[RMDB]
RNA sequence: GGGAACGACUCGAGUAGAGUCGAAAAGACCAAUAACAGAAUGCACCACAGCGUAAAAUCAUCUGAUUGGGUGAGUUGGUCGCACCGCCAUUUGUCGAACGAACGCCAAGCCUAAGCCGUCUUUGUGAACACGAGCUAGUCUUCGGACUAGCUCGAACUAGUGAACAUGGUUCGCCAUGUUCACUAGAAAAGAAACAACAACAACAAC
Reactivity to 2A3 in 0.01 (KOAc 150mM, MgCl2 10mM, bicine 150mM(pH8.5), 24C), signal-to-noise 5, nucleotides 027 to 156: g030a000c020c000a030a040u110a050a010c040a030g130a140a130u140g050c030a030c050c010a030c030a050g050c030g040u090a070a100a080a030u090c030a030u040c040u080g100a220u100u190g070g020g010u040g030a050g020u020u050g040g010u030c020g000c020a040c000c020g030c020c010a050u050u030u090g070u050c030g050a040a080c050g010a040a010c040g070c020c010a020a020g000c010c020u050a050a020g020c030c030g030u020c030u030u080u060g110u040g060a070a040c110a020c130g000a000g000c000u000a000g010u000c000u000u060c200g000g010a000c010u000a000g000c000u000c000g000a000a000
Reactivity to DMS in 0.01 (KOAc 150mM, MgCl2 10mM, bicine 150mM(pH8.5), 24C), signal-to-noise 2, nucleotides 027 to 156: g010a110c030c000a070a080u000a080a300c030a200g020a100a090u010g030c040a070c010c020a090c030a100g010c050g000u000a050a060a100a120u010c020a030u000c020u000g010a170u000u000g000g020g010u010g000a140g040u000u000g030g020u010c020g010c030a090c050c010g010c040c020a070u000u000u010g010u000c040g010a040a110c100g010a060a070c050g030c050c000a050a120g000c000c010u000a090a150g000c010c030g000u000c000u000u000u000g020u000g000a070a130c080a190c010g010a020g010c000u000a000g010u000c010u010u000c300g060g010a040c010u000a000g010c000u000c000g000a000a080